[RMDB]
RNA sequence: GGGAACGACUCGAGUAGAGUCGAAAAAUGGGAUGACUUUGACCUUAAAUGGUUGAAUGAGUGAGAUCUUUUGGACAUGUUCCGCACGGAACAGGAAGGAAAAGGCUAUAACAGAUCCGAGAUGCCCAUAUUUAUCUUUCUUCGGAAAGAUAAAUAUAAAAGAAACAACAACAACAAC
Reactivity to DMS in 0.01 (KOAc 150mM, MgCl2 10mM, bicine 150mM(pH8.5), 24C), signal-to-noise 9, nucleotides 027 to 126: a110u020g000g010g010a020u010g010a190c140u000u000u010g010a020c000c000u000u010a100a130a080u020g010g010u010u000g000a030a020u010g000a160g010u010g000a090g000a080u010c000u010u000u000u000g010g010a300c050a070u010g000u000u000c000c010g010c290a110c270g000g010a020a010c010a030g000g010a130a250g000g000a030a020a030a030g000g010c030u000a090u030a090a060c100a100g000a050u000c010c010g000a100g000a060u010g000c010c000c010
Reactivity to 2A3 in 0.01 (KOAc 150mM, MgCl2 10mM, bicine 150mM(pH8.5), 24C), signal-to-noise 9, nucleotides 027 to 126: a010u090g040g010g010a020u030g020a050c040u030u020u030g010a010c010c000u090u050a110a160a250u240g010g010u000u010g040a040a040u120g020a040g090u110g050a080g020a140u050c000u000u030u020u040g060g040a040c040a090u040g010u010u000c010c010g090c130a140c240g010g000a000a000c000a000g030g060a050a060g040g070a010a050a010a000g030g000c030u040a020u050a280a060c050a040g060a070u010c010c010g020a020g000a060u100g040c000c000c000
About this RNA
The data come from the RNA Mapping Database (RMDB), libraries RFM100 and RFMREP. The record gives the reactivity of an RNA of 177 nucleotides to DMS and 2A3. The reactions ran in a buffer of 150 mM KOAc, 10 mM MgCl2 and 150 mM bicine (pH 8.5), at 24 C. DMS adducts were read by reverse transcription with MarathonRT.